RNA sequence: GGGAACGACUCGAGUAGAGUCGAAAAAGUAGCUUCUACCUAUUUUUUAGUCCGCAUCUUGCAAGAUAAGACUGGCGACUUUAUGUCUACAAUUAUUACUUCCUGCCAAACUGCUGUUAGUAAGCUUAGCCAGACGGGUUCGCCCGUCUGAAAAGAAACAACAACAACAAC
Reactivity to 2A3 in 0.01 (KOAc 150mM, MgCl2 10mM, bicine 150mM(pH8.5), 24C), signal-to-noise 5, nucleotides 027 to 129: a000g030u040a010g010c030u070u070c040u070a150c020c000u050a170u060u100u010u030u020u070a030g020u050c050c000g060c050a020u000c050u020u040g040c080a090a050g010a190u190a060a020g030a040c030u040g040g000c030g000a010c000u080u090u080a170u150g060u040c010u040a040c030a100a060u130u060a100u140u030a110c030u050u020c050c000u010g020c020c030a080a090a060c090u120g020c020u000g010u040u020a050g010u020a110a000g050c010u040u040a020g010c000
Reactivity to DMS in 0.01 (KOAc 150mM, MgCl2 10mM, bicine 150mM(pH8.5), 24C), signal-to-noise 2, nucleotides 027 to 129: a000g030u010a000g030c150u050u030c170u070a240c250c050u030a050u030u030u050u020u000u090a060g030u070c040c050g040c110a000u000c080u000u000g040c010a110a160g010a110u040a110a040g040a060c110u050g030g020c110g030a060c070u060u070u040a030u070g040u030c030u010a040c060a000a000u080u050a040u030u000a050c000u000u000c060c000u050g050c020c120a020a010a010c110u050g030c050u000g030u100u020a090g060u040a100a040g010c050u010u030a090g060c220